About this RNA
This 177-nucleotide RNA was probed chemically with 2A3. Conditions: 150 mM KOAc, 10 mM MgCl2 and 150 mM bicine (pH 8.5), 24 C.
RNA sequence: GGGAACGACUCGAGUAGAGUCGAAAAGAGGUAAAUAAUAACCGGAGUCUCUCCGGCGACAAUUUACUGGUGAUUAACAACCUUCAGAGCAGCAGGUAAGCCCGAAUGCCGCCCUUUGGGGCGGCAUCCACCUGUGUUGGUUCGCCAACACAGGUGGAAAAGAAACAACAACAACAAC
Reactivity to 2A3 in 0.01 (KOAc 150mM, MgCl2 10mM, bicine 150mM(pH8.5), 24C), signal-to-noise 1, nucleotides 027 to 126: g140a020g000g000u030a030a030a000u080a000a020u030a060a040c010c010g090g000a050g090u090c140u040c010u000c200c000g000g000c000g010a000c050a020a000u000u000u000a050c040u030g020g020u060g100a120u080u230a050a050c040a000a030c030c000u070u030c020a020g000a010g070c030a000g000c000a000g020g020u070a030a000g000c000c000c020g000a020a020u110g000c010c010g110c010c000c010u110u170u190g170g000g000g000c080g010g000c010a000u000